[RMDB]
The data come from the RNA Mapping Database (RMDB), library OK3TST. Chemical mapping of a 207-nucleotide RNA with 2A3 and DMS.
RNA sequence: GGGAACGACUCGAGUAGAGUCGAAAAAAGCAGAUCCAAACUGAGAAGGGAGAAGAUGUGAUAGUUGAUAUCACAACAAGCUUGAGUUUUGAUUAAUAUCUUGGACAGGACAUUCUAUGUUCCAAAUAGAGAUUGUGUGUUACAAAGUGACUGCAGAUGAUUAGCAGUGGUUCGCCACUGCUAAUCAAAAAGAAACAACAACAACAAC
Reactivity to 2A3 in 0.01 (KOAc 150mM, MgCl2 10mM, bicine 150mM(pH8.5), 24C), signal-to-noise 2, nucleotides 027 to 156: a000a000g050c030a030g000a030u040c020c020a060a030a010c050u060g030a060g010a130a000g050g030g000a020g010a080a020g050a110u100g000u030g000a000u020a030g030u050u150g060a080u010a000u030c010a020c000a030a050c020a020a040g010c030u060u100g010a010g030u000u000u030u050g030a030u040u090a040a090u050a030u140c030u080u040g000g030a000c010a070g040g020a010c030a030u090u040c100u130a050u100g050u080u170c060c020a040a020a060u110a030g020a010g000a030u030u030g040u000g010u000g010u010u050a090c070a070a140a020g010u010g050a030c000u030g030c070a010g000a210
Reactivity to DMS in 0.01 (KOAc 150mM, MgCl2 10mM, bicine 150mM(pH8.5), 24C), signal-to-noise 2, nucleotides 027 to 156: a040a080g020c040a100g020a100u020c040c030a090a090a070c030u000g000a120g020a060a050g020g000g030a130g030a090a060g010a130u020g050u000g020a040u000a050g040u000u000g020a200u000a010u010c010a030c010a030a100c040a060a070g000c010u000u010g030a080g000u000u000u010u000g000a090u000u000a110a110u000a070u000c050u000u000g010g000a110c110a110g000g000a050c060a090u010u010c070u010a060u000g010u000u000c030c010a050a080a150u010a160g020a060g000a100u000u020g010u000g000u000g000u000u000a080c080a050a050a120g010u010g000a140c020u000g000c080a080g010a130
Values cover nucleotides 27 to 156.